[RMDB]
RNA sequence: GGGAACGACUCGAGUAGAGUCGAAAAAGGUGAUUUCUCCUGCACCUUUAUCAAUGGAGGAACUCGACUUUGCUGUGGGUCCCAAAGGGACCUUAGGUGCAGACAGUUACCGGCGGUAAAGUGUGAGCAUAGGUUCGUGUCUUCGGACACGAACCAAGUGUUAACUAUGGUUCGCCAUAGUUAACACAAAAGAAACAACAACAACAAC
Reactivity to 2A3 in 0.01 (KOAc 150mM, MgCl2 10mM, bicine 150mM(pH8.5), 24C), signal-to-noise 6, nucleotides 027 to 156: a000g000g010u000g000a020u020u060u020c000u020c000c000u140g060c010a010c000c000u100u230u110a050u030c080a020a050u300g020g000a010g010g010a030a040c000u000c020g020a010c000u020u020u010g000c010u020g010u080g010g000g000u000c010c000c020a150a170a100g000g000g000a000c000c000u010u070a020g000g000u000g000c010a040g100a300c020a020g030u050u100a000c000c010g020g010c020g020g000u010a000a010a020g030u070g120u110g070a010g030c060a090u090a170g000g010u000u000c000g000u010g000u000c000u020u050c160g080g000a000c010a000c000g000a000a000c000c000a000a010
Reactivity to DMS in 0.01 (KOAc 150mM, MgCl2 10mM, bicine 150mM(pH8.5), 24C), signal-to-noise 2, nucleotides 027 to 156: a050g020g010u010g000a300u000u000u010c040u010c020c010u000g000c030a060c010c000u010u000u010a050u010c130a120a130u010g020g030a090g010g020a070a060c020u000c000g010a050c020u000u000u000g020c020u010g030u010g000g000g010u000c000c010c000a050a100a220g050g020g040a040c010c000u020u010a010g030g000u000g020c050a220g010a130c090a140g010u000u000a020c020c020g000g000c070g010g010u000a030a040a040g020u010g000u010g000a110g030c020a140u000a050g020g030u000u000c000g010u010g000u000c000u000u020c300g020g020a030c000a010c010g000a000a000c000c010a000a060